[RMDB]
RNA sequence: GGGAACGACUCGAGUAGAGUCGAAAACUGGUCAGCUCCAAGGUGUCCACUGUCAAGGAUCUGCUGCCGCUGCUCGAGAAGGUCAUCGGAGCCGGUAAGCCGCUGCUGAUCAUCGCCGAGGACGUCGGUCCCAUCAGCCAUUCGUGGCUGAUGGGACAAAAGAAACAACAACAACAAC
Reactivity to DMS in 0.01 (KOAc 150mM, MgCl2 10mM, bicine 150mM(pH8.5), 24C), signal-to-noise 1, nucleotides 027 to 126: c060u010g010g000u000c000a090g000c080u000c040c080a150a220g000g010u080g040u000c000c000a050c180u010g000u010c050a140a200g020g000a040u000c000u000g030c100u000g000c000c020g000c120u040g000c070u000c040g010a070g000a060a120g010g000u030c040a100u000c040g010g000a120g000c040c030g000g000u000a010a150g000c030c200g000c070u040g010c010u030g000a090u000c060a060u000c100g000c000c020g010a060g000g030a090c020g050u000c090g010
Reactivity to 2A3 in 0.01 (KOAc 150mM, MgCl2 10mM, bicine 150mM(pH8.5), 24C), signal-to-noise 3, nucleotides 027 to 126: c010u000g000g040u070c020a000g010c000u000c030c060a120a110g050g000u040g070u030c010c010a060c080u140g030u120c090a130a090g050g000a080u040c040u030g000c020u020g000c000c000g010c070u110g000c010u010c070g010a020g010a220a010g160g080u080c070a070u040c110g070g000a030g000c000c000g010g070u100a170a080g030c020c030g030c040u100g000c030u020g000a040u040c010a010u100c010g000c030c030g040a020g070g040a020c040g030u050c050g000
The data come from the RNA Mapping Database (RMDB), library OK1LIB. This 177-nucleotide RNA was probed chemically with DMS and 2A3. The reactions ran in a buffer of 150 mM KOAc, 10 mM MgCl2 and 150 mM bicine (pH 8.5), at 24 C. For DMS, 1,255 sequencing reads were counted. For 2A3, 1,542 sequencing reads were counted. DMS adducts were read by reverse transcription with MarathonRT.